An RNA of 207 nucleotides, treated with 2A3 and read out base by base.
Reactivities are given for positions 27 through 156.
Conditions: 150 mM KOAc, 10 mM MgCl2 and 150 mM bicine (pH 8.5), 24 C.
It was measured as part of the RMDB library RSTRND.
As a SHAPE reagent, 2A3 marks flexible, mostly unpaired nucleotides at the ribose 2'-OH.

RNA sequence: GGGAACGACUCGAGUAGAGUCGAAAAUGACAGUGUUCUUCCCAACGAGGAACGCUGACGCGAAAGCGUGGUCUAGCGAACCAAUUAGCCUGCUUGAUGCGGGCAAUUGAUGACAGAAAAGCUACCCUAGGGAUAACAGAGUCGUCACUCGCAAGAGGACACUAGGCACGUUCGCGUGCCUAGUGUCAAAAGAAACAACAACAACAAC
Reactivity to 2A3 in 0.01 (KOAc 150mM, MgCl2 10mM, bicine 150mM(pH8.5), 24C), signal-to-noise 1, nucleotides 027 to 156: u150g000a000c010a030g020u000g060u030u000c020u020u040c050c010c030a020a020c080g020a050g060g000a010a000c000g000c000u010g010a010c010g050c010g040a180a000a000g000c000g000u000g030g000u030c020u040a000g000c010g000a010a030c000c020a000a000u020u000a060g000c000c020u050g000c000u060u290g100a140u300g010c000g000g000g030c020a000a000u030u000g010a080u060g010a030c020a070g100a100a120a000a000g010c030u040a040c000c000c000u070a050g000g080g000a020u110a140a140c060a060g010a030g060u030c030g000u020c050a070c120u000c000g000c020a050a080g040a070g080